[RMDB]
RNA sequence: GGGAACGACUCGAGUAGAGUCGAAAAGUCUAUGACAUAGGCCGCCCCGCACGCCAGCAUUUUUUCGAUGAGCUCGACCAUUUCAGCAAUCGCUUCGGUGGCCCCCACGUAGUCUUGCGGUGGUAGCCUGGUAAAUGAUGUUCGCAUCAUUUACCAGAAAAGAAACAACAACAACAAC
Reactivity to DMS in 0.01 (KOAc 150mM, MgCl2 10mM, bicine 150mM(pH8.5), 24C), signal-to-noise 5, nucleotides 027 to 126: g010u010c030u010a060u010g010a110c100a300u010a060g000g020c000c040g020c070c020c010c020g010c050a060c180g000c060c040a110g000c050a010u010u000u000u000u000u010c030g000a040u000g000a300g010c060u000c030g010a040c070c040a050u000u010u000c080a090g020c070a120a060u010c120g010c030u000u010c070g020g010u000g000g010c000c020c020c010c020a080c110g010u000a070g020u000c060u000u010g010c030g030g010u010g010g010u000a050g010c070
Reactivity to 2A3 in 0.01 (KOAc 150mM, MgCl2 10mM, bicine 150mM(pH8.5), 24C), signal-to-noise 2, nucleotides 027 to 126: g000u020c020u050a130u140g150a070c020a160u140a030g000g020c000c000g020c000c020c020c000g010c010a040c040g000c000c000a040g050c020a040u060u050u020u050u040u090c040g050a040u060g030a050g030c010u020c040g040a040c020c000a060u010u110u140c030a030g020c040a120a220u140c090g000c070u050u040c040g070g000u050g060g020c020c000c010c010c010a040c020g090u050a020g020u000c030u030u020g000c020g000g010u060g040g000u040a030g010c000

Source: RMDB library OK2TST, as collected in RNAgym. Chemical mapping of a 177-nucleotide RNA with DMS and 2A3. The RNA was probed in 150 mM KOAc, 10 mM MgCl2 and 150 mM bicine (pH 8.5) at 24 C. The DMS profile rests on 5,077 reads. For DMS the reverse transcriptase was MarathonRT.